[RMDB]
RNA sequence: GGGAACGACUCGAGUAGAGUCGAAAAGAUAUGGAGAAAGCAUCGAUCGUGUCUCGUGUCGGAAACGACACCACGGGAGCUUCUCCUAAGUCAAACCCCAUUAUCAGCUUCGGCUGAUAAUGGGGAAGGAGCUAGACUAGUUCGCUAGUCUAGCUCCAAAAGAAACAACAACAACAAC
Reactivity to 2A3 in 0.01 (KOAc 150mM, MgCl2 10mM, bicine 150mM(pH8.5), 24C), signal-to-noise 1, nucleotides 027 to 126: g030a020u070a010u170g040g020a000g050a070a150a020g070c010a290u260c040g120a140u120c010g050u000g100u100c140u080c300g030u020g010u030c000g070g060a080a030a110c000g020a000c000a010c010c020a010c020g040g000g000a010g000c020u000u000c000u000c000c000u010a070a000g040u000c100a020a020a300c020c000c000c000a010u000u000a010u010c000a000g000c020u040u290c300g140g040c000u030g020a000u010a000a000u000g000g010g000g000a010a050
Overview
Chemical mapping of a 177-nucleotide RNA with 2A3. The RNA was probed in 150 mM KOAc, 10 mM MgCl2 and 150 mM bicine (pH 8.5) at 24 C. For 2A3, 1,212 sequencing reads were counted.